The record gives the reactivity of an RNA of 177 nucleotides to 2A3 and DMS. The data come from the RNA Mapping Database (RMDB), library OK1LIB. Conditions: 150 mM KOAc, 10 mM MgCl2 and 150 mM bicine (pH 8.5), 24 C. The DMS profile rests on 2,861 reads. For 2A3 the reverse transcriptase was SuperScript II with manganese. For 2A3, 1,406 sequencing reads were counted.
[RMDB]
RNA sequence: GGGAACGACUCGAGUAGAGUCGAAAAAGAUGGGUGGCAAGUGGUCAAAAAGUAGUGUGAUUGGAUGGCCUACUGUAAGGGAAAGAAUGAGACGAGCUGAGCCAGCAGCAGAUAGGGUGGGAGCAGCCCAUUAUUGCCGCUUCGGCGGCAAUAAUGGAAAAGAAACAACAACAACAAC
Reactivity to 2A3 in 0.01 (KOAc 150mM, MgCl2 10mM, bicine 150mM(pH8.5), 24C), signal-to-noise 3, nucleotides 027 to 126: a030g120a050u050g020g000g080u060g120g010c070a090a010g010u020g090g000u130c080a010a030a040a020a010g060u100a010g070u080g020u010g230a180u120u170g120g060a070u140g060g000c010c000u080a090c030u100g100u100a000a050g040g020g010a000a090a060g100a040a120u240g040a060g020a070c100g020a000g000c020u040g030a040g050c020c030a000g000c010a000g000c010a000g070a130u160a050g100g050g040u130g040g000g040a000g000c030a040g020c000
Reactivity to DMS in 0.01 (KOAc 150mM, MgCl2 10mM, bicine 150mM(pH8.5), 24C), signal-to-noise 2, nucleotides 027 to 126: a060g020a070u010g010g000g020u010g000g000c060a040a000g020u010g010g040u040c060a050a100a080a080a040g010u020a090g010u040g030u000g000a190u000u000g010g010a280u000g000g000c050c020u010a050c000u000g000u010a050a070g010g000g030a020a060a100g000a120a060u030g000a140g000a110c100g050a120g000c020u000g000a140g010c070c020a050g010c040a050g000c030a010g040a150u010a050g010g030g000u000g000g030g040a190g000c090a070g000c140